[RMDB]
RNA sequence: GGGAACGACUCGAGUAGAGUCGAAAAUGCAAAGGACGUCGCCCCACCGUGUACAUUCGUGAGCUUUCGCUUCGAGAUUUCCGCUCGUGGCCAGAGUGCACUGUCACUUUGGAACCUGGGGUGACGCCAAUUGUGCCCAGUUCGCUGGGCACAAUUGAAAAGAAACAACAACAACAAC
Reactivity to DMS in 0.01 (KOAc 150mM, MgCl2 10mM, bicine 150mM(pH8.5), 24C), signal-to-noise 3, nucleotides 027 to 126: u000g020c190a060a110a110g010g000a070c000g030u000c000g000c010c000c000c000a090c100c080g000u000g000u020a070c040a070u010u010c140g020u000g010a170g060c010u000u000u010c300g000c010u000u000c030g000a040g010a110u000u000u010c290c150g000c000u000c010g000u000g000g000c000c060a020g020a010g010u000g000c020a080c120u000g000u000c040a000c040u000u000u020g000g010a120a070c090c190u000g000g000g020g010u000g000a020c000g010c030
Reactivity to 2A3 in 0.01 (KOAc 150mM, MgCl2 10mM, bicine 150mM(pH8.5), 24C), signal-to-noise 2, nucleotides 027 to 126: u150g010c030a050a000a060g060g030a070c000g000u000c000g030c000c000c010c000a010c040c010g050u030g030u090a040c030a080u080u200c100g000u010g030a030g000c010u020u030u020c010g010c010u060u000c040g000a020g020a160u120u170u150c060c070g080c020u020c010g020u020g020g000c000c010a000g000a010g010u020g030c010a000c110u010g020u060c010a010c000u140u180u140g060g000a110a060c030c040u050g000g030g000g000u000g000a000c010g000c000

An RNA of 177 nucleotides, treated with DMS and 2A3 and read out base by base. The 2A3 profile rests on 2,350 reads. 2A3 adducts were read by reverse transcription with SuperScript II with manganese. Conditions: 150 mM KOAc, 10 mM MgCl2 and 150 mM bicine (pH 8.5), 24 C. The data come from the RNA Mapping Database (RMDB), library OK2TST.